Record summary: Structure probing data (2A3 and DMS) for a 177-nucleotide construct. For 2A3, 35,994 sequencing reads were counted. High 2A3 reactivity points to a flexible backbone, as in loops and unpaired stretches. Conditions: 150 mM KOAc, 10 mM MgCl2 and 150 mM bicine (pH 8.5), 24 C.
[RMDB]
RNA sequence: GGGAACGACUCGAGUAGAGUCGAAAACACCGAAUCGACCGACGGGCAGUGUACCCAUAUGAGCUACACCUACCAGUGUCAGACCACACAUCAGUCUGGCGGCCUGGUCUGCGGUGGCGAUUACAUCGUUAUUCACUAGGUUCGCCUAGUGAAUAACAAAAGAAACAACAACAACAAC
Reactivity to 2A3 in 0.01 (KOAc 150mM, MgCl2 10mM, bicine 150mM(pH8.5), 24C), signal-to-noise 9, nucleotides 027 to 126: c060a030c010c020g050a040a080u080c030g100a110c050c010g060a090c040g030g020g010c070a050g020u030g030u130a060c000c010c020a050u080a120u220g100a040g000c020u010a010c020a080c010c010u020a010c000c000a010g010u010g000u070c000a000g010a030c030c020a060c030a030c010a220u220c030a030g010u000c000u000g000g010c000g000g020c020c010u000g000g030u020c070u050g050c100g030g010u020g010g010c010g020a020u050u100a100c090a150u160c090
Reactivity to DMS in 0.01 (KOAc 150mM, MgCl2 10mM, bicine 150mM(pH8.5), 24C), signal-to-noise 6, nucleotides 027 to 126: c100a150c050c050g000a060a100u010c040g030a100c040c020g020a100c110g020g000g010c100a090g020u000g000u010a100c070c000c040a130u020a050u030g000a240g020c070u010a030c000a060c000c020u000a050c000c000a040g010u060g020u000c000a030g000a040c000c080a150c230a100c190a090u030c180a140g000u000c020u000g010g000c010g020g000c170c000u010g010g000u000c080u000g000c080g000g030u000g000g000c050g000a100u030u000a080c190a090u040c100